The record gives the reactivity of an RNA of 177 nucleotides to DMS and 2A3.
The reactions ran in a buffer of 150 mM KOAc, 10 mM MgCl2 and 150 mM bicine (pH 8.5), at 24 C.
Values cover nucleotides 27 to 126.
For 2A3 the reverse transcriptase was SuperScript II with manganese.
RNA sequence: GGGAACGACUCGAGUAGAGUCGAAAAGAAGGAAGUGUUGAGCGGCAAAGAGAAGAAGAUGAAGAUCCACAUCGGACAGGAGGAACUCGACAAAGCCCUCUCUUCCUCGAGACCUUCCCUGUCUCCGCCACCACCGAUAUUUCGAUAUCGGUGGUGGAAAAGAAACAACAACAACAAC
Reactivity to DMS in 0.01 (KOAc 150mM, MgCl2 10mM, bicine 150mM(pH8.5), 24C), signal-to-noise 2, nucleotides 027 to 126: g000a230a080g000g000a000a020g010u010g000u000u000g010a080g000c060g020g050c150a080a110a080g000a100g000a050a010g010a270a170g050a060u000g040a100a070g020a100u000c130c070a050c090a020u000c090g000g020a070c230a090g000g000a030g000g000a080a040c100u000c040g000a130c110a060a120a190g000c040c010c050u000c040u000c020u000u000c090c020u000c070g030a060g010a030c040c000u000u000c060c000c000u010g040u010c010u000c010c300g020
Reactivity to 2A3 in 0.01 (KOAc 150mM, MgCl2 10mM, bicine 150mM(pH8.5), 24C), signal-to-noise 2, nucleotides 027 to 126: g100a000a000g040g010a000a010g000u050g030u300u160g080a030g000c200g010g000c050a060a090a040g000a010g070a210a010g010a030a000g020a070u120g040a130a010g020a110u060c050c000a050c030a140u090c060g050g020a010c070a120g050g060a040g000g080a120a030c020u000c030g010a030c110a000a160a040g000c040c020c000u040c000u000c000u030u030c030c020u000c010g030a040g010a040c010c080u030u040c000c000c000u010g010u000c020u010c020c060g030